[RMDB]
RNA sequence: GGGAACGACUCGAGUAGAGUCGAAAAGGUCGGAUUACGGACUGAUUUGAGGGCGGGAGUCCUGUGUGCUGGACCAGGCCAUGUUGACGGGGCGUCCGCACUAAGCUGGCCGUCAAUAUGGGUGUCACGGAGGAGUCCGAGACAUUCAGGUUGGCUACUAUCUAUGUGACUUCGGUCACAUAGAUAGAAAAGAAACAACAACAACAAC
Reactivity to 2A3 in 0.01 (KOAc 150mM, MgCl2 10mM, bicine 150mM(pH8.5), 24C), signal-to-noise 5, nucleotides 027 to 156: g050g040u090c030g040g050a090u140u120a060c060g040g000a020c030u030g110a300u060u090u150g120a100g020g010g010c030g000g000g000a020g030u020c020c010u040g020u010g010u050g030c020u050g030g050a110c050c100a060g050g070c030c010a060u180g030u080u090g100a010c000g000g000g000g000c050g060u020c000c020g000c010a030c050u060a040a030g030c020u030g030g010c010c000g000u030c040a040a010u080a050u080g010g000g010u010g010u020c020a010c040g010g020a050g080g080a060g130u030c000c000g020a020g000a000c010a010u040u040c020a010g000g040u060u000g030g000c000u040a060
Reactivity to DMS in 0.01 (KOAc 150mM, MgCl2 10mM, bicine 150mM(pH8.5), 24C), signal-to-noise 1, nucleotides 027 to 156: g000g000u000c040g030g000a150u010u000a040c060g060g020a110c020u010g000a160u010u000u010g010a070g010g010g000c020g020g020g020a090g000u000c020c020u000g010u000g040u000g030c030u000g050g020a100c020c170a150g040g040c000c010a030u000g060u000u000g000a070c020g000g030g020g010c000g000u000c010c000g000c030a040c070u000a070a180g030c000u010g020g030c020c010g050u000c050a070a030u010a090u000g030g020g000u000g010u000c030a140c020g000g010a080g050g000a300g000u050c000c000g040a100g000a000c020a010u000u010c020a060g010g030u010u000g000g000c010u010a250